[RMDB]
RNA sequence: GGGAACGACUCGAGUAGAGUCGAAAAGAGGAUACGAAUAGCUUCGUGCUUUCGAUAGCUUCGUAGCGGCGGCUACGUCCCCUAGGGGAGCCGCCUCCCCUGCUAUCGGCGCGAGGGGAGUAUCCGACCUAGUCACUACGUUCGCGUAGUGACUAGGAAAAGAAACAACAACAACAAC
Reactivity to 2A3 in 0.01 (KOAc 150mM, MgCl2 10mM, bicine 150mM(pH8.5), 24C), signal-to-noise 3, nucleotides 027 to 126: g170a040g000g010a000u030a010c030g040a140a190u120a170g130c010u030u020c010g010u010g020c000u150u150u240c030g010a010u010a000g000c010u070u060c080g060u090a040g030c040g060g000c010g020g000c020u100a080c090g220u100c000c020c000c010u100a110g010g030g000g000a010g020c020c010g020c030c000u020c000c000c000c000u010g000c000u000a010u030c020g010g000c000g000c010g000a010g000g010g020g000a050g000u000a000u020c010c000g010a000
Reactivity to DMS in 0.01 (KOAc 150mM, MgCl2 10mM, bicine 150mM(pH8.5), 24C), signal-to-noise 2, nucleotides 027 to 126: g000a210g010g000a010u000a010c000g010a170a170u010a180g000c010u000u000c010g010u000g010c040u020u000u010c050g020a020u000a010g010c000u000u010c040g000u000a100g020c130g020g010c030g020g000c030u000a090c180g000u010c010c000c010c050u010a150g020g000g000g000a080g000c050c030g000c050c000u000c020c020c020c010u010g000c000u000a020u000c010g020g010c000g010c010g010a020g010g010g020g000a300g020u000a020u000c000c000g020a170
The record gives the reactivity of an RNA of 177 nucleotides to 2A3 and DMS. High 2A3 reactivity points to a flexible backbone, as in loops and unpaired stretches. The RNA was probed in 150 mM KOAc, 10 mM MgCl2 and 150 mM bicine (pH 8.5) at 24 C. For DMS the reverse transcriptase was MarathonRT. The 2A3 profile rests on 4,915 reads. Source: RMDB library OK2TRN, as collected in RNAgym. Reactivities are given for positions 27 through 126.